[RMDB]
RNA sequence: GGGAACGACUCGAGUAGAGUCGAAAACGUUCUCAACAAAUCGUGGCAUGGUAUGCCUACAGUGCUUGAGGAUGGUGCUGAUGAUGAAGCCACUUCCCCGUGGGAAAAGAGCGUCAAUGACAUUCUGAAAAAGGCGCUUCCAUUCAUCAAGGAUGCACCAGAUGUCAUGUUUCGACAUGACAUCUGGAAAAGAAACAACAACAACAAC
Reactivity to DMS in 0.01 (KOAc 150mM, MgCl2 10mM, bicine 150mM(pH8.5), 24C), signal-to-noise 2, nucleotides 027 to 156: c050g030u000u000c000u000c000a050a070c060a030a080a080u010c110g010u000g040g030c000a080u000g060g030u000a300u000g010c030c010u010a060c070a100g030u010g050c070u010u000g000a060g030g030a070u010g000g010u000g020c030u020g010a110u010g010a030u010g010a070a050g020c050c010a010c030u000u010c010c010c040c080g000u010g000g000g010a080a060a070a140g010a010g060c000g040u000c000a060a170u010g000a120c020a130u000u000c070u000g000a100a040a170a140a180g010g000c050g010c020u000u000c000c040a170u010u000c010a030u000c010a080a120g020g010a070u000g000c020a120
Reactivity to 2A3 in 0.01 (KOAc 150mM, MgCl2 10mM, bicine 150mM(pH8.5), 24C), signal-to-noise 4, nucleotides 027 to 156: c000g000u000u000c000u000c010a010a030c030a010a070a030u210c160g030u010g000g000c010a040u050g260g020u300a050u100g030c010c000u070a000c020a050g050u030g040c120u020u010g000a010g020g010a010u040g040g060u050g020c000u050g000a090u040g000a010u020g040a050a020g100c010c020a020c000u090u110c030c000c000c030g000u070g000g010g040a050a170a080a040g060a010g010c010g020u030c020a070a130u160g050a120c070a150u230u060c100u220g090a070a040a000a010a010g020g000c020g010c000u030u010c010c000a070u000u030c010a030u000c000a020a030g110g000a030u080g020c010a030